[RMDB]
RNA sequence: GGGAACGACUCGAGUAGAGUCGAAAAACUAGUGGAUGUGGUGUCAAAAAAGGCGAACACAAAACACUUUCGCAGCUUUUUUUCCUGCCCUUGUAUUUGAUGUCUUUGGUGUAGGAGCUGCGUAAGUACUUAGUUUCCAGUUCGCUGGAAACUAAGUAAAAGAAACAACAACAACAAC
Reactivity to DMS in 0.01 (KOAc 150mM, MgCl2 10mM, bicine 150mM(pH8.5), 24C), signal-to-noise 3, nucleotides 027 to 126: a080c100u020a030g030u020g000g010a140u010g000u000g010g010u010g020u020c060a010a020a080a070a050a060g010g000c010g010a070a230c050a040c110a050a050a090a100c100a040c010u010u000u010c000g030c000a010g000c010u000u000u010u010u000u010u010c000c010u000g000c010c000c010u000u010g000u030a050u010u020u020g020a140u030g020u020c030u020u010u010g010g000u030g040u010a010g020g000a050g020c010u000g000c000g000u000a010a010g000u010
Reactivity to 2A3 in 0.01 (KOAc 150mM, MgCl2 10mM, bicine 150mM(pH8.5), 24C), signal-to-noise 8, nucleotides 027 to 126: a000c080u070a020g020u020g040g050a080u030g020u020g030g020u100g020u090c060a060a110a030a050a080a140g030g000c030g060a200a010c030a000c020a040a040a120a000c020a010c000u060u050u030c000g000c000a000g000c040u170u110u080u040u020u140u060c000c000u010g010c010c000c000u050u030g120u150a240u100u150u180g200a150u210g070u080c090u060u060u100g050g000u220g010u060a000g010g010a010g000c000u010g000c000g010u020a040a020g030u000